The record gives the reactivity of an RNA of 177 nucleotides to 2A3 and DMS.
2A3 adducts were read by reverse transcription with SuperScript II with manganese.
In probing experiments dimethyl sulfate is read out at A N1 and C N3, which are open when not base-paired.
For DMS the reverse transcriptase was MarathonRT.
Reactivities are given for positions 27 through 126.
As a SHAPE reagent, 2A3 marks flexible, mostly unpaired nucleotides at the ribose 2'-OH.

[RMDB]
RNA sequence: GGGAACGACUCGAGUAGAGUCGAAAAGCGUGAUUAGGGAUAAUUAUUAAUCUGUAAUCCCGCGAAAAGAACAGGGCCCAAUUAUUAAUCGGGGCCCAUGGACGAAUUUUAAGUCCCCACACGCGAAACUAUAUAGUCCUUUCGAGGACUAUAUAGUAAAAGAAACAACAACAACAAC
Reactivity to 2A3 in 0.01 (KOAc 150mM, MgCl2 10mM, bicine 150mM(pH8.5), 24C), signal-to-noise 2, nucleotides 027 to 126: g000c000g020u030g010a050u020u060a070g000g000g060a000u030a180a010u130u220a100u200u170a170a050u030c020u000g300u050a020a000u010c000c040c020g000c000g010a050a060a000a000g010a040a040c070a100g020g000g040c000c000c000a040a020u090u120a100u060u150a150a080u150c070g030g020g000g000c000c010c010a000u000g000g000a000c040g010a120a100u130u150u070u100a170a010g050u010c010c000c000c000a060c000a010c030g090c020g030a130a040
Reactivity to DMS in 0.01 (KOAc 150mM, MgCl2 10mM, bicine 150mM(pH8.5), 24C), signal-to-noise 3, nucleotides 027 to 126: g010c000g010u010g000a020u000u010a020g010g000g010a020u000a090a140u020u000a170u020u010a140a040u000c030u000g000u000a020a020u000c010c080c020g010c020g010a060a060a070a140g000a060a220c070a070g020g000g030c010c010c000a090a060u000u010a110u010u020a070a090u000c110g000g020g030g020c000c000c020a000u000g000g010a120c060g010a060a080u000u010u010u010a090a190g000u000c010c000c040c140a070c160a080c110g000c120g000a080a120
Source: RMDB library OK2TRN, as collected in RNAgym. For DMS, 2,298 sequencing reads were counted.